The record gives the reactivity of an RNA of 177 nucleotides to 2A3 and DMS.
2A3 adducts were read by reverse transcription with SuperScript II with manganese.
The 2A3 profile rests on 7,933 reads.
The data come from the RNA Mapping Database (RMDB), library OK2TRN.

RNA sequence: GGGAACGACUCGAGUAGAGUCGAAAAAGCAGAUCGGCCACCGCAGUAGUGUUGUCGCCGACCAGCACCGCCAAGACCAGGGCACGGCGCCGUUCUCGGUGGUCGAGGGGAAUGGCGUGUACCGAGGCAUACGCAUAACGUUCGCGUUAUGCGUAUGAAAAGAAACAACAACAACAAC
Reactivity to 2A3 in 0.01 (KOAc 150mM, MgCl2 10mM, bicine 150mM(pH8.5), 24C), signal-to-noise 3, nucleotides 027 to 126: a000g060c060a040g020a090u010c010g020g010c010c000a000c010c020g000c060a040g050u250a020g030u030g080u150u150g080u100c040g000c000c000g040a040c030c020a020g000c030a130c030c030g000c040c030a120a010g070a100c040c060a050g010g010g000c050a020c040g020g000c000g000c010c010g030u110u060c010u000c000g000g020u000g010g000u000c000g000a010g010g000g020g030a030a070u090g020g000c030g000u070g030u030a070c020c020g010a080g050g030
Reactivity to DMS in 0.01 (KOAc 150mM, MgCl2 10mM, bicine 150mM(pH8.5), 24C), signal-to-noise 6, nucleotides 027 to 126: a100g000c080a110g010a120u000c010g020g000c000c020a020c010c000g020c200a050g020u010a040g010u000g020u000u010g010u010c120g030c020c010g010a130c060c040a110g000c040a080c080c040g000c030c040a060a070g000a170c090c050a150g000g000g020c040a100c030g000g000c030g010c010c030g010u000u000c020u000c020g010g010u000g010g010u000c010g000a020g010g010g000g010a100a090u000g000g010c010g020u000g000u000a130c040c020g000a130g010g010